Conditions: 150 mM KOAc, 10 mM MgCl2 and 150 mM bicine (pH 8.5), 24 C. The record gives the reactivity of an RNA of 177 nucleotides to DMS. It was measured as part of the RMDB library TTRINS.
RNA sequence: GGGAACGACUCGAGUAGAGUCGAAAAGAUAUGGACCGUAGUAGACAUGUUCAUCAGUCAUCAUAAACUCGUCGGAAACGACGAGGUUUAUGAUGACUGAUGAACAACAGCUACACGGUCCUAAGUCCACUGUAGUCACGUUCGCGUGACUACAGUGAAAAGAAACAACAACAACAAC
Reactivity to DMS in 0.01 (KOAc 150mM, MgCl2 10mM, bicine 150mM(pH8.5), 24C), signal-to-noise 2, nucleotides 027 to 126: g010a080u000a300u000g000g000a010c010c000g020u000a230g060u000a010g000a030c140a220u000g000u010u000c000a020u000c000a000g000u010c000a000u000c000a010u000a000a010a100c020u000c000g020u000c010g000g020a120a100a270c010g040a020c000g000a010g010g000u010u000u000a000u000g000a010u000g010a000c000u020g010a000u000g010a000a000c000a010a050c240a300g010c010u000a000c000a030c010g000g000u000c000c000u000a000a090g000u000c030
Notes
For DMS, 1,961 sequencing reads were counted.